[RMDB]
Source: RMDB library OK2TST, as collected in RNAgym.
Structure probing data (2A3 and DMS) for a 177-nucleotide construct.
The 2A3 profile rests on 1,524 reads.
RNA sequence: GGGAACGACUCGAGUAGAGUCGAAAAUUUCUAGGUCUCAUCAGGAUGCGUUAUCUAGAGCUGUGUUUUCAUCUGAGGCUUGGAUUGGGUCCAAUCUCACUGCUAAGUCAGGUGUGGCCAGGGUUAACACCGAUGUGAGAUUCGUCUCACAUCGGUGAAAAGAAACAACAACAACAAC
Reactivity to 2A3 in 0.01 (KOAc 150mM, MgCl2 10mM, bicine 150mM(pH8.5), 24C), signal-to-noise 2, nucleotides 027 to 126: u010u030u040c000u020a010g030g020u020c020u000c040a060u050c080a040g180g030a080u090g050c020g040u080u100a080u080c060u080a050g050a010g110c060u040g070u010g080u170u040u030u090c030a080u000c020u010g050a020g110g060c000u040u030g020g000a020u050u070g080g030g000u030c040c000a030a070u010c030u000c020a060c040u100g010c050u110a090a090g020u070c020a010g000g040u020g010u030g000g000c010c030a010g130g000g010u020u100a050a010
Reactivity to DMS in 0.01 (KOAc 150mM, MgCl2 10mM, bicine 150mM(pH8.5), 24C), signal-to-noise 3, nucleotides 027 to 126: u020u010u000c010u000a040g010g010u000c020u000c030a130u020c100a140g020g010a070u000g010c110g010u000u010a060u000c040u000a060g000a070g020c040u000g000u010g030u000u000u020u000c050a050u020c070u000g000a070g020g010c050u000u010g000g000a050u000u010g000g010g020u010c080c150a080a080u000c030u010c030a090c060u000g010c050u000a050a100g010u000c030a040g000g020u010g020u000g000g000c040c030a080g000g010g010u000u010a040a200
The RNA was probed in 150 mM KOAc, 10 mM MgCl2 and 150 mM bicine (pH 8.5) at 24 C. The DMS profile rests on 2,933 reads.